[RMDB]
RNA sequence: GGGAACGACUCGAGUAGAGUCGAAAACCCAAAGCGUUCGCGCUUUGGGAAAGAAUAAACGAGCGAAAAGAAUGAUGUGGAGGCUCGUAAAAACCACAUCAAAAAGUCAACGGUUCGCCGUUGACAACAUAUUUCAGCUCUUCGGAGCUGAAAUAUGAAAAGAAACAACAACAACAAC
Reactivity to 2A3 in 0.01 (KOAc 150mM, MgCl2 10mM, bicine 150mM(pH8.5), 24C), signal-to-noise 2, nucleotides 027 to 126: c020c000c020a000a010a010g030c020g060u070u130c220g020c010g030c080u010u010u000g000g000g000a130a120a000g040a060a080u180a160a100a030c010g000a000g020c050g080a100a090a010a030g100a070a130u110g000a010u020g010u010g000g020a070g300g000c000u000c040g020u060a050a010a010a000a000c020c000a000c000a010u000c010a010a050a060a050a000g010u010c000a010a000c000g050g060u020u080c220g060c100c000g010u000u000g000a000c000a020a000
Reactivity to DMS in 0.01 (KOAc 150mM, MgCl2 10mM, bicine 150mM(pH8.5), 24C), signal-to-noise 1, nucleotides 027 to 126: c000c000c010a010a050a000g010c000g020u000u000c300g030c030g010c000u000u000u000g000g000g000a000a000a000g040a130a080u000a040a110a190c030g000a000g000c020g070a170a100a220a020g000a180a070u010g000a000u000g010u000g000g000a160g020g000c020u000c040g000u000a010a030a010a040a040c040c000a000c000a030u000c000a000a090a030a150a030g000u000c000a010a010c010g060g000u000u030c180g050c020c000g000u000u000g000a010c000a040a050

The record gives the reactivity of an RNA of 177 nucleotides to 2A3 and DMS.
It was measured as part of the RMDB library M2PK50.
The RNA was probed in 150 mM KOAc, 10 mM MgCl2 and 150 mM bicine (pH 8.5) at 24 C.
The DMS profile rests on 725 reads.
Reactivities are given for positions 27 through 126.
For 2A3 the reverse transcriptase was SuperScript II with manganese.